[RMDB]
RNA sequence: GGGAACGACUCGAGUAGAGUCGAAAACAACACGUCCUCGUGGUACAGAGUGGUAACAUGUGUCACCACAUAUCCAAGCUUGGGUACACGGGCUUGACCCAACCCCUUGGGCGGAUGGUGGCACAUGAAAAGAAGUAACACUUCGGUGUUACUUCAACUCAAUUGUAUCGUUCGCGAUACAAUUGAGAAAAGAAACAACAACAACAAC
Reactivity to 2A3 in 0.01 (KOAc 150mM, MgCl2 10mM, bicine 150mM(pH8.5), 24C), signal-to-noise 7, nucleotides 027 to 156: c030a000a020c030a010c050g150u120c030c030u130c050g050u110g040g090u210a100c110a090g090a040g080u110g040g080u150a100a030c010a000u000g000u000g010u010c000a010c020c010a050c030a110u230a030u050c010c010a000a010g030c030u030u020g010g000g000u020a010c030a020c050g010g020g010c030u260u300g160a300c000c010c000a000a040c000c000c000c000u000u000g000g000g010c010g010g000a030u020g000g010u010g000g000c000a000c000a000u000g000a000a000a000a010g010a000a000g000u000a000a000c000a000c000u020u060c260g060g000u000g000u000u000a000c000u000u000c000a010a010
Reactivity to DMS in 0.01 (KOAc 150mM, MgCl2 10mM, bicine 150mM(pH8.5), 24C), signal-to-noise 3, nucleotides 027 to 156: c030a070a060c020a070c040g010u000c070c080u000c040g020u000g000g030u000a130c050a110g010a080g030u000g010g000u000a080a200c010a040u010g020u010g010u000c000a020c010c000a030c050a190u010a060u000c010c020a010a130g000c110u000u010g000g020g070u000a110c130a060c050g000g020g040c020u010u010g000a150c020c030c000a120a040c030c010c020c020u000u000g000g000g010c150g000g010a110u000g020g000u000g010g000c000a020c010a000u010g000a030a060a090a160g010a020a010g000u000a000a010c000a010c000u000u010c300g050g010u010g000u000u000a000c000u000u000c000a030a080
An RNA of 207 nucleotides, treated with 2A3 and DMS and read out base by base. The RNA was probed in 150 mM KOAc, 10 mM MgCl2 and 150 mM bicine (pH 8.5) at 24 C.